The record gives the reactivity of an RNA of 177 nucleotides to 2A3 and DMS. 2A3 adducts were read by reverse transcription with SuperScript II with manganese. The 2A3 profile rests on 6,448 reads. The DMS profile rests on 3,317 reads.
RNA sequence: GGGAACGACUCGAGUAGAGUCGAAAAGAUAUGGACUGGUGUGGACAUGCUAACCACUCGGAAACGAGUGGCUAGCAACAGCCACUGCCAGUCCUAAGUCAAAGGAUUAUUCUUCGGAAUAAUCCAACUUCAAGAAGUACUUCGGUACUUCUUGAAGAAAAGAAACAACAACAACAAC
Reactivity to 2A3 in 0.01 (KOAc 150mM, MgCl2 10mM, bicine 150mM(pH8.5), 24C), signal-to-noise 2, nucleotides 027 to 126: g010a000u020a010u060g000g000a000c000u000g000g040u020g010u020g000g010a030c090a280u300g000c000u000a000a020c000c000a010c000u000c010g000g030a020a030a000c000g000a000g010u020g000g000c000u000a000g000c000a040a010c090a040g000c000c000a010c010u030g010c000c020a000g000u000c000c000u000a000a000g010u000c020a040a120a150g010g000a010u000u010a000u010u000c030u050u110c300g150g000a000a000u000a010a000u030c000c000a000a000
Reactivity to DMS in 0.01 (KOAc 150mM, MgCl2 10mM, bicine 150mM(pH8.5), 24C), signal-to-noise 3, nucleotides 027 to 126: g000a010u000a120u010g000g000a010c010u000g010g030u010g020u000g000g000a040c090a230u020g040c000u010a000a020c000c000a010c000u000c010g030g000a050a010a040c000g010a030g030u010g000g020c010u000a000g020c010a050a040c290a160g000c000c000a000c010u030g020c000c000a020g000u010c000c000u000a000a030g000u010c010a120a150a170g020g010a000u000u000a000u010u010c000u000u020c250g010g010a020a020u000a000a010u000c000c000a020a040

It was measured as part of the RMDB library TTRDES. In probing experiments dimethyl sulfate is read out at A N1 and C N3, which are open when not base-paired.